[RMDB]
RNA sequence: GGGAACGACUCGAGUAGAGUCGAAAAUCGAACCUGUAUCUGCCUGGAAAUUACGCUUCGCAAAAUUGAAAAUACUGCAAAUUCAGCUUCUUAUAUCGCUUAUAUUGCAGGCCAGUUCAAUCGUCGAAUCGAUAAAUUUAUUCGUAAAUUUAUCGAUAAAAGAAACAACAACAACAAC
Reactivity to DMS in 0.01 (KOAc 150mM, MgCl2 10mM, bicine 150mM(pH8.5), 24C), signal-to-noise 8, nucleotides 027 to 126: u010c070g010a080a130c060c030u010g020u000a060u000c040u000g020c040c010u010g000g010a080a080a120u000u010a080c100g010c060u000u000c050g010c100a050a060a090a060u000u000g000a060a040a050a100u000a120c030u000g010c020a000a030a300u000u010c200a030g010c010u000u010c140u010u010a120u010a110u010c180g010c010u000u000a070u000a140u000u000g000c000a020g020g000c160c170a090g000u000u000c020a020a030u000c090g000u010c090g010a090
Reactivity to 2A3 in 0.01 (KOAc 150mM, MgCl2 10mM, bicine 150mM(pH8.5), 24C), signal-to-noise 5, nucleotides 027 to 126: u080c010g000a020a040c010c010u020g010u020a060u030c020u040g030c010c000u020g020g050a020a050a040u080u020a040c040g010c050u030u040c030g030c060a060a080a110a160u020u040g040a070a050a030a020u110a090c010u010g010c000a010a010a070u020u030c010a010g000c010u130u030c070u170u260a160u040a040u300c010g000c000u010u010a020u020a030u100u040g000c010a010g020g000c030c010a000g010u000u020c010a020a030u030c020g090u050c020g070a030